[RMDB]
RNA sequence: GGGAACGACUCGAGUAGAGUCGAAAAGAUAUGGAAUUAUACGCUCGAUAAGCUGCGCUCGGAAACGAGCGGCAGCUUUUGACGAGCGUAAUUCCUAAGUCAAAAGCAAGAUCUUCGGAUCUUGCAACGCUUAGUACGAGUUCGCUCGUACUAAGCGAAAAGAAACAACAACAACAAC
Reactivity to DMS in 0.01 (KOAc 150mM, MgCl2 10mM, bicine 150mM(pH8.5), 24C), signal-to-noise 1, nucleotides 027 to 126: g000a050u000a300u010g000g000a000a050u000u000a130u020a100c040g040c000u000c010g000a190u000a020a010g050c000u000g000c000g000c000u000c020g000g000a050a070a090c000g020a010g030c010g040g070c010a010g000c000u000u010u020u000g020a180c070g020a010g020c010g020u000a000a020u000u000c000c000u000a030a150g010u020c060a110a150a130a130g010c010a060a010g000a010u000c000u000u010c200g030g020a000u000c000u010u010g010c000a010a010
Source: RMDB library TTRDES, as collected in RNAgym.
The record gives the reactivity of an RNA of 177 nucleotides to DMS.